Conditions: 150 mM KOAc, 10 mM MgCl2 and 150 mM bicine (pH 8.5), 24 C. Chemical mapping of a 177-nucleotide RNA with DMS and 2A3. For DMS, 2,090 sequencing reads were counted. Source: RMDB library TTRINS, as collected in RNAgym. For 2A3, 2,876 sequencing reads were counted.
RNA sequence: GGGAACGACUCGAGUAGAGUCGAAAAGAUAUGGAUCAAAGAACAAUGCAAUCCGUUGAAAAAGAUGUUGUUCGGAAACGAACAACAUCUUUGGAGGAUUGACCCAUUUCCCUUUGAUCCUAAGUCACGAUUCCUCUAAGUUCGCUUAGAGGAAUCGAAAAGAAACAACAACAACAAC
Reactivity to DMS in 0.01 (KOAc 150mM, MgCl2 10mM, bicine 150mM(pH8.5), 24C), signal-to-noise 2, nucleotides 027 to 126: g000a030u000a300u000g000g010a010u000c010a000a030a000g000a130a210c290a060a020u000g000c000a000a010u010c000c000g050u000u040g000a150a110a010a010a000g000a010u010g010u010u000g020u000u010c000g020g010a070a110a200c000g010a020a010c000a000a000c000a000u000c000u010u000u010g020g030a070g000g000a010u000u010g000a150c250c300c070a040u000u020u010c290c150c010u000u010u000g000a030u000c010c010u010a030a100g000u010c000a210
Reactivity to 2A3 in 0.01 (KOAc 150mM, MgCl2 10mM, bicine 150mM(pH8.5), 24C), signal-to-noise 1, nucleotides 027 to 126: g040a020u110a030u210g010g010a000u030c000a000a000a030g030a030a050c100a120a080u060g000c020a000a000u030c020c020g110u270u300g270a300a300a010a000a000g030a000u040g010u030u010g010u020u000c020g030g020a050a040a010c010g000a000a000c010a000a000c000a000u000c010u010u000u010g030g050a000g000g000a010u000u040g030a040c080c000c030a040u040u060u160c000c000c000u000u000u040g000a000u000c000c010u010a190a000g070u030c020a010